[RMDB]
RNA sequence: GGGAACGACUCGAGUAGAGUCGAAAAUUUUGUUCUAAAGCUGUUCCUGAUGAUCAAUUGGAAAAAGCUAUCGGCGAGGUAAAAGAUAAGAUCAUGGAGAGUUACCGUAAAAGUUUGAAUGUAGUAGAUUCUACUACACCAGCCGUUCGUGCUGAAAACUGCUUUUAGGAUUCGUCCUAAAAGCAGUAAAAGAAACAACAACAACAAC
Reactivity to DMS in 0.01 (KOAc 150mM, MgCl2 10mM, bicine 150mM(pH8.5), 24C), signal-to-noise 2, nucleotides 027 to 156: u020u000u000u000g070u000u010c030u000a130a160a070g010c000u010g020u000u000c000c020u040g010a090u000g020a210u000c060a120a210u000u000g000g040a080a070a080a050a110g000c040u000a090u000c010g030g000c000g020a060g000g000u000a050a040a060a060g030a100u000a090a080g010a090u000c050a140u040g020g020a150g010a200g020u010u000a020c020c050g040u020a040a070a060a120g020u000u010u020g030a030a090u010g020u000a020g030u000a050g000a250u010u000c020u000a030c000u000a030c020a050c020c030a100g000c010c020g000u000u010c070g070u000g050c030u000g000a040a080a060
Reactivity to 2A3 in 0.01 (KOAc 150mM, MgCl2 10mM, bicine 150mM(pH8.5), 24C), signal-to-noise 2, nucleotides 027 to 156: u030u080u020u100g000u050u010c060u090a040a000a180g010c000u040g020u040u000c010c000u040g060a080u040g020a070u050c080a060a120u140u170g000g010a030a090a000a040a040g000c000u020a050u030c030g020g000c020g000a070g010g040u100a000a070a070a000g010a040u130a190a060g020a040u150c040a050u170g000g030a020g000a010g050u040u040a040c050c000g020u060a090a090a000a070g020u050u140u140g070a120a070u060g010u000a000g000u000a000g020a300u230u110c030u040a000c000u000a000c000a010c020c000a000g000c010c000g090u130u130c050g080u130g030c020u030g010a080a100a000
An RNA of 207 nucleotides, treated with DMS and 2A3 and read out base by base. The RNA was probed in 150 mM KOAc, 10 mM MgCl2 and 150 mM bicine (pH 8.5) at 24 C. It was measured as part of the RMDB library OK3TST. The DMS profile rests on 2,434 reads. For 2A3 the reverse transcriptase was SuperScript II with manganese.